Chemical mapping of a 177-nucleotide RNA with 2A3 and DMS. The DMS profile rests on 1,486 reads. Conditions: 150 mM KOAc, 10 mM MgCl2 and 150 mM bicine (pH 8.5), 24 C. For DMS the reverse transcriptase was MarathonRT. Reactivities are rounded to 0.1 and cut off at 0 and 3.

RNA sequence: GGGAACGACUCGAGUAGAGUCGAAAAUACACUUUACGUGUGCUGGUUUCAUUACUUUGUCCCAAACCAGGCACGCGUAAUUAAAGGCCUGUUUGGCCAGGUCCGCGUUAUCGAUGGUCACCAAUAAGUCGAGAUAAGCUUUCGAGCUUAUCUCGACAAAAGAAACAACAACAACAAC
Reactivity to 2A3 in 0.01 (KOAc 150mM, MgCl2 10mM, bicine 150mM(pH8.5), 24C), signal-to-noise 2, nucleotides 027 to 126: u100a000c060a030c110u020u040u040a000c020g000u000g010u010g020c000u020g030g000u050u060u060c090a100u040u220a120c190u260u200u280g070u130c040c000c000a020a010a010c060c000a080g170g040c010a000c010g000c010g000u000a000a000u040u070a140a030a000g010g010c000c000u100g100u110u140u150g080g020c020c010a010g000g000u030c020c030g000c010g060u030u090a110u130c040g020a030u080g010g040u050c050a020c070c000a050a050u100a170a000
Reactivity to DMS in 0.01 (KOAc 150mM, MgCl2 10mM, bicine 150mM(pH8.5), 24C), signal-to-noise 2, nucleotides 027 to 126: u020a070c090a220c120u000u010u000a010c020g010u010g030u010g000c010u000g000g020u000u010u000c130a080u000u010a070c150u010u030u000g000u000c020c010c010a070a040a030c010c000a050g030g000c000a010c010g040c010g010u000a010a020u010u000a070a080a080g010g000c010c000u010g010u000u000u000g020g010c130c000a050g000g000u000c020c030g010c120g000u000u000a060u000c050g030a040u000g000g020u010c050a110c080c040a060a100u010a080a110